[RMDB]
RNA sequence: GGGAACGACUCGAGUAGAGUCGAAAACCUCGCAUCGCAAGAUCGUGCUUGCGACUUACACGUAGGGCGAGGGGUGGGCGAAAGUUGCCAUGAGACCGUAACUUUCGUAGUCAUUGAUAAAGGGGCACAUGCCCUGACUAGUUCGCUAGUCAGGGAAGAGUGAAUCAUUGUUCGCAAUGAUUCACUCAAAAGAAACAACAACAACAAC
Reactivity to 2A3 in 0.01 (KOAc 150mM, MgCl2 10mM, bicine 150mM(pH8.5), 24C), signal-to-noise 8, nucleotides 027 to 156: c000c000u020c020g030c020a040u020c010g010c010a010a020g020a110u130c090g110u110g060c010u000u010g000c000g010a010c020u080u160a080c120a040c120g170u160a070g050g070g030c040g020a040g000g000g010g040u110g010g010g010c010g000a000a010a000g010u010u010g010c010c020a070u120g100a060g030a190c050c040g010u010a000a000c000u000u020u000c020g000u000a020g060u020c060a050u010u160g060a040u150a130a080a040g030g010g010g000c050a040c020a160u170g050c000c000c000u000g000a000c000u010a000g020u040u020c080g020c140u000a000g000u000c000a000g020g000g000a000a000
Reactivity to DMS in 0.01 (KOAc 150mM, MgCl2 10mM, bicine 150mM(pH8.5), 24C), signal-to-noise 3, nucleotides 027 to 156: c030c000u000c040g040c120a120u000c030g010c010a040a030g010a120u000c270g030u000g010c010u010u010g010c000g020a040c070u020u000a100c080a100c110g050u000a080g020g030g020c030g000a060g000g010g000g010u010g050g000g000c000g030a020a020a040g050u000u000g000c000c030a210u000g020a200g010a190c130c090g020u000a000a020c000u000u000u000c040g020u010a110g010u010c050a130u000u000g000a130u000a040a090a120g020g020g010g060c030a060c080a120u000g000c000c000c000u010g000a010c000u000a010g020u000u010c300g050c000u000a020g000u000c000a000g010g010g010a030a040